[RMDB]
RNA sequence: GGGAACGACUCGAGUAGAGUCGAAAAAAAGUACCAGCUUGUAUUAGGAACAUAGUAGGUGCUUAAAAAGUAUUUGGUGUGGGGCCGGGGACUGUGGUUCACUCCUUUAAUCCCAGCACUUUGGGAGGCCAAGGCAGGCGGAUCACCUGAGGUCAGGGUUUAUAGAAGAGUUCGCUCUUCUAUAAACAAAAGAAACAACAACAACAAC
Reactivity to 2A3 in 0.01 (KOAc 150mM, MgCl2 10mM, bicine 150mM(pH8.5), 24C), signal-to-noise 1, nucleotides 027 to 156: a000a000a000g000u000a000c000c000a050g030c050u070u070g020u100a180u150u270a200g040g060a110a040c010a040u190a050g030u020a060g030g000u010g000c010u040u020a080a030a000a080a140g070u110a200u080u190u230g000g000u050g010u040g070g020g060g020c060c020g000g000g000g000a040c060u070g000u010g040g000u040u020c010a010c030u040c000c000u000u160u060a010a040u000c010c000c010a030g130c090a060c140u210u130u000g000g030g000a000g000g010c070c010a030a010g010g000c020a000g070g000c090g040g030a010u030c000a000c000c070u050g040a030g080g050u060c050a040g080g020